RNA sequence: GGGAACGACUCGAGUAGAGUCGAAAAUGGGGAGAGAAGGGAGGAUCGGAUGGGAAGAGUAUAUCCUAUGGGAAUCCCCGUCCUCCCGUCACGUCCAGCCCCUCCCCGUGUCUAGUGAAGGGGGACUAUGGUACAGACUUCGGUCUGUACAAAAGAAACAACAACAACAAC
Reactivity to DMS in 0.01 (KOAc 150mM, MgCl2 10mM, bicine 150mM(pH8.5), 24C), signal-to-noise 9, nucleotides 027 to 129: u050g010g010g010g000a110g010a070g030a140a090g000g000g000a080g000g000a000u050c100g040g000a070u030g000g000g000a030a060g020a190g050u000a080u060a040u000c020c020u000a070u020g030g020g010a120a130u040c040c010c030c030g030u010c000c010u020c000c010c010g030u010c050a080c130g030u000c020c020a040g030c010c000c010c000u000c030c000c000c030g030u050g030u010c050u000a060g040u030g050a100a060g030g000g000g020g020a160c080u030a060u060g020
Reactivity to 2A3 in 0.01 (KOAc 150mM, MgCl2 10mM, bicine 150mM(pH8.5), 24C), signal-to-noise 9, nucleotides 027 to 129: u120g010g000g000g000a070g010a020g010a100a100g010g000g000a010g000g000a040u160c100g040g050a080u080g060g030g030a080a020g050a020g190u100a080u030a050u140c020c030u060a170u200g110g010g030a030a070u040c000c000c000c010g010u010c000c010u000c000c000c000g000u020c010a030c020g060u010c000c030a060g020c010c000c000c000u030c000c000c000c000g030u110g030u010c100u050a100g050u050g150a110a060g010g000g000g000g000a000c030u050a080u170g070

An RNA of 170 nucleotides, treated with DMS and 2A3 and read out base by base. The reactions ran in a buffer of 150 mM KOAc, 10 mM MgCl2 and 150 mM bicine (pH 8.5), at 24 C. For DMS, 71,239 sequencing reads were counted.